[RMDB]
RNA sequence: GGGAACGACUCGAGUAGAGUCGAAAAAUAAUUUUACUAAGUGAUGUGGUUCCAUCAGAGACAAGCUGCAGAAUAUCUGCCUUUCCAUCAGCAACAACUUUGGAUAUAUCAAUCAAUGAUUGUGCAACUUGGGCAGCGUUAGUGGCUGUUUGAGCAGUAAAUCAACGCUGUUCGCAGCGUUGAUUUAAAAAGAAACAACAACAACAAC
Reactivity to DMS in 0.01 (KOAc 150mM, MgCl2 10mM, bicine 150mM(pH8.5), 24C), signal-to-noise 1, nucleotides 027 to 156: a180u000a030a090u020u000u010u010a110c040u000a060a070g030u000g030a030u000g020u050g030g000u000u000c030c030a130u000c060a150g010a140g000a120c050a030a110g030c010u000g030c040a100g010a140a120u000a090u000c070u030g000c000c060u000u000u010c020c020a010u000c060a220g020c030a070a050c040a030a070c050u010u000u010g030g050a060u000a160u000a070u000c070a020a090u010c080a060a100u010g000a150u000u000g030u010g070c060a090a050c010u000u040g060g010g010c000a040g030c100g060u010u000a130g030u000g030g010c000u000g000u000u000u000g000a150g030c080a130g060
Reactivity to 2A3 in 0.01 (KOAc 150mM, MgCl2 10mM, bicine 150mM(pH8.5), 24C), signal-to-noise 2, nucleotides 027 to 156: a000u090a010a030u100u020u070u110a070c050u140a170a100g030u050g000a040u030g070u060g070g000u050u070c100c060a060u030c100a100g070a000g010a040c010a020a130g000c020u050g000c070a000g040a070a000u040a110u250c000u020g020c000c000u040u170u100c060c030a080u070c090a040g120c000a010a140c000a020a030c010u050u020u020g000g000a050u050a020u030a060u300c060a080a020u000c070a090a130u070g060a300u000u040g020u060g010c100a090a110c040u040u130g000g030g020c000a020g000c000g000u000u040a040g040u100g090g000c000u010g110u000u050u040g020a000g000c030a060g040